[RMDB]
RNA sequence: GGGAACGACUCGAGUAGAGUCGAAAAGAUAUGGACCGACAAGGGAGCUGCUCGGAAACGAGACAGCAUCGAUCUUGCCGGUCCUAAGUCAAACAACGAUCCAGCUGUUCGCAGCUGGAUCGUUGAAGGUUAUUUGGAAGUUCGCUUCCAAAUAACCAAAAGAAACAACAACAACAAC
Reactivity to 2A3 in 0.01 (KOAc 150mM, MgCl2 10mM, bicine 150mM(pH8.5), 24C), signal-to-noise 2, nucleotides 027 to 126: g010a000u040a020u120g000g000a000c000c010g000a010c000a000a000g040g000g040a000g000c000u000g000c000u010c000g000g000a060a070a050c020g020a010g150a160c010a010g010c020a070u300c020g040a060u040c000u000u000g000c020c010g060g000u000c000c000u010a000a000g000u010c010a040a050a120c000a020a000c000g010a000u000c000c000a000g000c000u050g160u190u230c300g020c180a010g000c020u000g000g010a000u000c000g000u000u000g000a000a000
Reactivity to DMS in 0.01 (KOAc 150mM, MgCl2 10mM, bicine 150mM(pH8.5), 24C), signal-to-noise 2, nucleotides 027 to 126: g000a060u000a300u000g000g010a000c000c000g000a000c000a000a000g000g030g000a040g050c010u010g000c000u000c020g040g000a060a100a290c000g010a010g000a090c010a010g000c000a230u000c190g010a030u010c000u000u000g020c000c000g010g020u000c010c010u000a010a040g000u000c040a150a140a180c020a010a000c000g000a000u000c000c020a020g000c000u010g020u010u000c210g010c000a010g040c000u010g000g000a000u000c000g010u000u000g010a030a060

Structure probing data (2A3 and DMS) for a 177-nucleotide construct. For DMS the reverse transcriptase was MarathonRT. For DMS, 1,768 sequencing reads were counted. The 2A3 profile rests on 3,734 reads. The RNA was probed in 150 mM KOAc, 10 mM MgCl2 and 150 mM bicine (pH 8.5) at 24 C. It was measured as part of the RMDB library TTRDEL.